This 207-nucleotide RNA was probed chemically with 2A3. It was measured as part of the RMDB library OK3TST. The reactions ran in a buffer of 150 mM KOAc, 10 mM MgCl2 and 150 mM bicine (pH 8.5), at 24 C. The 2A3 profile rests on 475 reads.
RNA sequence: GGGAACGACUCGAGUAGAGUCGAAAAGAAGUCCUCUCUAGCUCUCUAGUCCUAGCUGAUCGACUAGAGUCUCGAUCGACUUCUCAGAGUCUCAGAGCUAGAGCUGAUCAGAGUCUCCUCUGAGAUCGACUGAAGCUUCCUAGAGUCAGCUGAGAAGAGCUUUCGCAUUAUUCGUAAUGCGAAAGCUAAAAGAAACAACAACAACAAC
Reactivity to 2A3 in 0.01 (KOAc 150mM, MgCl2 10mM, bicine 150mM(pH8.5), 24C), signal-to-noise 1, nucleotides 027 to 156: g050a110a010g060u000c030c000u020c010u040c050u070a000g010c020u000c000u000c000u110a010g030u070c040c000u030a010g000c050u040g010a010u120c060g000a000c030u030a050g000a020g130u050c010u020c000g050a090u000c040g050a060c050u110u070c030u030c020a010g010a010g030u000c000u000c010a000g010a010g020c070u260a070g000a010g030c030u110g010a110u210c120a140g040a130g200u170c020u020c010c010u020c000u000g000a000g010a030u080c050g080a110c050u000g020a010a030g000c040u030u030c010c010u060a030g000a000g070u050c030a020g000c050u010g070a030g040a070a020g010